[RMDB]
RNA sequence: GGGAACGACUCGAGUAGAGUCGAAAACAGAUAGUUGCGCAAAUAUUGCCACGCUUCGCAUAAAAGUUGCAUGAAAUCGGUUCCACCAGCGAAGCAUUCAAAUGAAAAGCAGAACCGCGAAUGCGCAGGUAGUGAGGAUAUUCGUAUCCUCACUACCAAAAGAAACAACAACAACAAC
Reactivity to 2A3 in 0.01 (KOAc 150mM, MgCl2 10mM, bicine 150mM(pH8.5), 24C), signal-to-noise 6, nucleotides 027 to 126: c040a020g110a080u190a120g150u090u060g010c010g000c010a020a110a050u180a080u120u060g000c010c020a100c090g030c010u010u000c020g020c020a040u160a170a200a020a020g060u150u120g040c060a030u050g080a040a110a040u080c020g030g000u030u000c030c050a080c050c030a060g000c010g000a010a020g010c000a010u050u050c060a020a090a210u270g090a130a040a010a000g010c020a010g020a010a000c000c020g030c080g080a150a030u010g000c000g000c020a000
Reactivity to DMS in 0.01 (KOAc 150mM, MgCl2 10mM, bicine 150mM(pH8.5), 24C), signal-to-noise 4, nucleotides 027 to 126: c040a120g010a170u040a020g010u020u010g020c000g010c000a050a080a110u020a060u030u010g010c040c110a080c110g010c020u000u030c010g000c010a080u020a090a120a110a090g000u020u010g000c090a080u020g000a030a100a110u000c020g010g000u000u000c020c090a080c130c070a060g010c000g000a030a040g010c000a130u010u030c130a080a080a070u030g040a020a040a120a110g020c060a140g010a020a010c010c010g030c300g000a070a100u010g000c000g000c030a020